[RMDB]
RNA sequence: GGGAACGACUCGAGUAGAGUCGAAAACGGGUGGUAUAGGAGCCGGCCGGACCCGGGCUCCCUCGCUGGCUUCAUCGUCGGGCUCCGACAAGGAAGACAAUGGAAAGCCCCCAUCCUAAAAACAAAAGCGUGGUGGAGACUUCGGUCUCCACUACGCAAAAGAAACAACAACAACAAC
Reactivity to DMS in 0.01 (KOAc 150mM, MgCl2 10mM, bicine 150mM(pH8.5), 24C), signal-to-noise 1, nucleotides 027 to 126: c170g000g000g030u020g010g040u030a050u040a120g080g000a010g000c090c020g040g050c070c050g030g000a110c100c030c030g000g010g030c050u010c030c010c050u040c000g030c020u010g000g000c020u000u020c000a070u020c080g000u020c000g000g000g040c120u080c030c010g070a070c060a000a000g000g020a070a020g000a020c060a040a030u000g010g000a030a070a110g000c030c000c000c010c030a160u050c000c020u010a070a070a020a120a160c060a020a140a150a230
Reactivity to 2A3 in 0.01 (KOAc 150mM, MgCl2 10mM, bicine 150mM(pH8.5), 24C), signal-to-noise 3, nucleotides 027 to 126: c030g000g000g000u110g010g050u110a160u080a280g030g010a000g020c000c010g050g020c060c060g120g040a150c000c000c020g000g100g010c000u020c000c000c000u030c040g010c060u030g030g000c000u010u010c020a040u070c050g020u010c000g010g090g150c120u100c120c010g030a030c060a020a050g090g010a030a050g020a040c030a030a040u120g050g050a130a080a060g000c010c000c000c000c000a070u050c000c000u050a090a120a070a010a000c090a010a130a040a020
An RNA of 177 nucleotides, treated with DMS and 2A3 and read out base by base.
For DMS, 1,194 sequencing reads were counted.
DMS (dimethyl sulfate) methylates the pairing face of unpaired adenines and cytosines.
DMS adducts were read by reverse transcription with MarathonRT.
The data come from the RNA Mapping Database (RMDB), library OK1LIB.
The RNA was probed in 150 mM KOAc, 10 mM MgCl2 and 150 mM bicine (pH 8.5) at 24 C.